This 177-nucleotide RNA was probed chemically with DMS and 2A3. For DMS the reverse transcriptase was MarathonRT. The reactions ran in a buffer of 150 mM KOAc, 10 mM MgCl2 and 150 mM bicine (pH 8.5), at 24 C. The data come from the RNA Mapping Database (RMDB), library TTRDEL.
RNA sequence: GGGAACGACUCGAGUAGAGUCGAAAAGAUAUGGACUACUUUGAUCUACCAGCCUAAGACAGUCGGAAACGAUCGAGGCUGUGUAGGGAGUAGUCCUAAGUCAAACGUACAUGUUCGCAUGUACGAACUGUCAAGACCAGUUCGCUGGUCUUGACAGAAAAGAAACAACAACAACAAC
Reactivity to DMS in 0.01 (KOAc 150mM, MgCl2 10mM, bicine 150mM(pH8.5), 24C), signal-to-noise 2, nucleotides 027 to 126: g020a050u000a300u010g000g000a000c000u000a000c010u000u000u000g030a070u010c020u000a000c010c000a010g000c020c000u010a200a100g020a170c300a130g000u000c010g000g040a100a040a180c020g010a020u000c090g020a020g000g000c000u000g000u010g050u000a000g000g000g000a000g020u010a000g020u000c010c000u000a000a030g020u010c010a070a080a240c000g020u000a000c010a000u000g000u000u020c230g000c020a000u000g040u000a020c000g010a000a080
Reactivity to 2A3 in 0.01 (KOAc 150mM, MgCl2 10mM, bicine 150mM(pH8.5), 24C), signal-to-noise 1, nucleotides 027 to 126: g050a010u110a040u160g000g000a000c000u010a000c020u130u120u160g150a100u060c000u000a010c010c010a010g010c010c000u090a140a060g100a070c060a020g030u010c000g060g000a020a110a020c030g000a010u090c040g040a010g000g000c000u020g100u100g000u030a000g030g030g020a020g010u000a000g000u000c010c010u000a010a000g020u040c030a150a040a000c010g000u040a000c000a000u030g060u020u110c300g000c100a010u000g000u000a000c000g000a050a020